Notes:
This 177-nucleotide RNA was probed chemically with 2A3 and DMS. DMS adducts were read by reverse transcription with MarathonRT. Conditions: 150 mM KOAc, 10 mM MgCl2 and 150 mM bicine (pH 8.5), 24 C. For 2A3 the reverse transcriptase was SuperScript II with manganese. Values cover nucleotides 27 to 126. Source: RMDB library OK1LIB, as collected in RNAgym.
RNA sequence: GGGAACGACUCGAGUAGAGUCGAAAAACGCCAGUGCGCUGUAGUGGUGCCGACGUAAAGCGUCGACGGCGCACUCGGAUGGAAAGGGGAGAUGCGCUCGCUGCGGGAUGCCGCGCGUCGGCGUCGCGAGCAGCAGCCCAUUCGUGGGCUGCUGCUCAAAAGAAACAACAACAACAAC
Reactivity to 2A3 in 0.01 (KOAc 150mM, MgCl2 10mM, bicine 150mM(pH8.5), 24C), signal-to-noise 5, nucleotides 027 to 126: a000c070g030c030c010a070g040u080g080c080g020c030u080g030u170a100g050u060g110g010u050g020c010c000g010a010c000g010u040a020a060a110g090c010g030u030c020g030a050c060g010g010c010g000c000a000c000u000c020g080g050a160u170g050g060a050a110a060g050g030g040g000a040g020a070u060g010c010g000c020u050c050g020c030u080g040c020g020g070g020a110u180g100c030c000g030c000g000c010g040u080c010g000g000c000g000u020c010g000c030
Reactivity to DMS in 0.01 (KOAc 150mM, MgCl2 10mM, bicine 150mM(pH8.5), 24C), signal-to-noise 2, nucleotides 027 to 126: a180c110g030c000c000a040g020u000g000c030g000c030u000g000u020a130g010u000g020g020u000g020c050c000g010a020c050g000u000a110a240a150g010c020g000u000c010g020a090c000g020g000c000g020c000a010c020u000c090g000g010a170u030g020g000a040a040a080g010g030g000g010a140g000a040u010g000c000g000c010u020c020g030c010u030g020c040g010g000g020a100u020g000c000c020g000c240g000c050g000u040c000g000g000c010g010u000c000g020c040